[RMDB]
This 177-nucleotide RNA was probed chemically with 2A3 and DMS. For DMS, 2,490 sequencing reads were counted.
RNA sequence: GGGAACGACUCGAGUAGAGUCGAAAAGAUAUGGAUCGAGCUACGUAGGAGGCGAUCGGAAACGAUCGCUACCCACCCUACCACUAGCUAAGACAGUCCUAAGUCAAAACGCCAGUUCGCUGGCGAAUCAUAACUCCAUCUUCGGAUGGAGUUAUGAAAAAGAAACAACAACAACAAC
Reactivity to 2A3 in 0.01 (KOAc 150mM, MgCl2 10mM, bicine 150mM(pH8.5), 24C), signal-to-noise 1, nucleotides 027 to 126: g020a040u120a060u210g000g020a040u080c060g060a020g030c010u020a010c200g020u000a010g000g030a010g000g030c030g000a000u000c020g020g040a050a060a010c000g000a000u000c000g000c000u010a010c000c000c000a020c010c010c010u020a010c010c010a070c090u010a000g010c010u110a210a020g110a040c060a020g030u000c010c000u050a190a030g100u030c050a040a050a100a120c030g020c010c000a000g000u070u110c230g100c090u000g000g000c000g000a000a040
Reactivity to DMS in 0.01 (KOAc 150mM, MgCl2 10mM, bicine 150mM(pH8.5), 24C), signal-to-noise 4, nucleotides 027 to 126: g010a090u010a170u010g010g010a030u010c080g020a050g020c000u000a010c150g010u000a000g010g000a160g010g000c000g000a000u000c010g000g020a090a090a160c000g020a010u000c010g020c010u000a000c030c050c090a300c070c020c010u000a000c000c060a100c160u010a010g000c000u000a180a060g000a080c300a110g000u000c020c020u000a030a100g000u000c040a040a020a100a160c020g010c010c000a020g000u000u000c180g020c010u000g000g000c010g000a050a050